Conditions: 150 mM KOAc, 10 mM MgCl2 and 150 mM bicine (pH 8.5), 24 C. The record gives the reactivity of an RNA of 207 nucleotides to 2A3. Source: RMDB library M2RFPK, as collected in RNAgym. The 2A3 profile rests on 752 reads.
RNA sequence: GGGAACGACUCGAGUAGAGUCGAAAAGGGUGAGACCUAGGAACCCUAGGGGUAUUCUCAAAGGAAGCUUUUGCAGUGACGCCCAUGUAAGUGGGAUAUAACAACAGAACUCGUAUGAGUAGCCUAAUAAAUCGGACCUUCUUCGGAAGGUCCGAAAGUCCUGUAGUAACUUCGGUUACUACAGGACAAAAGAAACAACAACAACAAC
Reactivity to 2A3 in 0.01 (KOAc 150mM, MgCl2 10mM, bicine 150mM(pH8.5), 24C), signal-to-noise 1, nucleotides 027 to 156: g020g030g000u070g070a090g050a090c000c020u020a010g060g080a040a080c050c000c000u020a040g030g000g000g010u010a010u060u030c020u030c040a050a050a020g100g000a050a060g040c070u040u050u110u110g010c040a040g010u040g070a010c080g010c000c030c000a020u100g080u160a170a090g010u030g030g000g000a010u010a000u020a120a030c020a010a000c010a000g030a070a020c020u040c020g000u190a070u070g010a030g040u010a010g020c010c010u020a100a140u050a070a130a010u050c000g000g000a000c020c000u000u000c020u010u010c030g050g000a000a000g010g000u030c000c000g000a000a000a000